[RMDB]
RNA sequence: GGGAACGACUCGAGUAGAGUCGAAAACUCUGGUCCUCUCGCAACAAUAGUUCGUGAACUCGGUCAGGUCCGGAAGGAAGCAGCCGCAGCGAAUGACUUGUGUGCCGGGAUGUGGCUGGGGUCCCAAAACUCACUAAAAUGUUCGCAUUUUAGUGAGCUAGUCCUUUGACUUCGGUCAAAGGACUAGAAAAGAAACAACAACAACAAC
Reactivity to 2A3 in 0.01 (KOAc 150mM, MgCl2 10mM, bicine 150mM(pH8.5), 24C), signal-to-noise 2, nucleotides 027 to 156: c010u020c010u010g000g000u000c000c010u020c000u020c000g020c000a010a010c000a010a060u020a020g010u020u010c000g010u020g100a090a090c130u020c050g010g030u090c030a010g000g020u030c020c010g050g100a090a090g010g000a010a010g010c000a000g000c020c010g040c060a040g000c000g010a000a000u020g020a020c140u030u010g010u020g070u070g080c150c070g000g000g030a020u030g150u300g020g000c000u000g000g000g010g020u030c000c000c000a030a030a020a000c000u000c000a000c000u020a000a020a000a000u030g020u090u090c250g010c090a000u000u000u000u000a000g000u000g000a000g000